This 177-nucleotide RNA was probed chemically with 2A3 and DMS.
RNA sequence: GGGAACGACUCGAGUAGAGUCGAAAAAGACCUCCAGAAACUUUCCUCCCCACCUCUCCAGAGGUUUCUGGGGAAUGUCCUGUGAGCUCAACUCUUGGAGAAGAUAGUGCUUAACCCAGAUUCCAUUCACAUAUAACUGGUUCGCCAGUUAUAUGUGAAAAGAAACAACAACAACAAC
Reactivity to 2A3 in 0.01 (KOAc 150mM, MgCl2 10mM, bicine 150mM(pH8.5), 24C), signal-to-noise 8, nucleotides 027 to 126: a000g060a020c020c000u010c010c010a010g050a020a070a010c030u080u110u060c010c020u040c010c010c010c010a070c010c030u040c010u040c030c030a040g020a030g080g000u020u040u020c010u020g000g010g000g030a040a040u090g030u030c010c010u050g030u060g090a030g010c000u020c070a040a100c030u020c020u070u100g060g030a060g010a070a010g040a030u080a040g080u070g030c010u040u050a060a060c000c010c010a020g020a120u080u030c020c000a030u030u010
Reactivity to DMS in 0.01 (KOAc 150mM, MgCl2 10mM, bicine 150mM(pH8.5), 24C), signal-to-noise 2, nucleotides 027 to 126: a030g000a010c010c020u000c000c010a020g000a030a110a100c040u020u000u020c050c080u000c000c010c010c020a150c090c030u000c040u000c060c110a160g010a060g040g030u000u000u000c010u020g070g000g000g000a090a010u030g000u000c010c040u020g070u070g000a070g020c050u040c050a020a100c080u000c020u010u020g000g030a050g030a030a100g000a090u000a070g000u020g000c020u000u000a040a080c030c000c020a060g000a120u030u020c010c030a190u010u000

For 2A3 the reverse transcriptase was SuperScript II with manganese.
The reactions ran in a buffer of 150 mM KOAc, 10 mM MgCl2 and 150 mM bicine (pH 8.5), at 24 C.
For DMS the reverse transcriptase was MarathonRT.
Source: RMDB libraries RFM100 and RFMREP, as collected in RNAgym.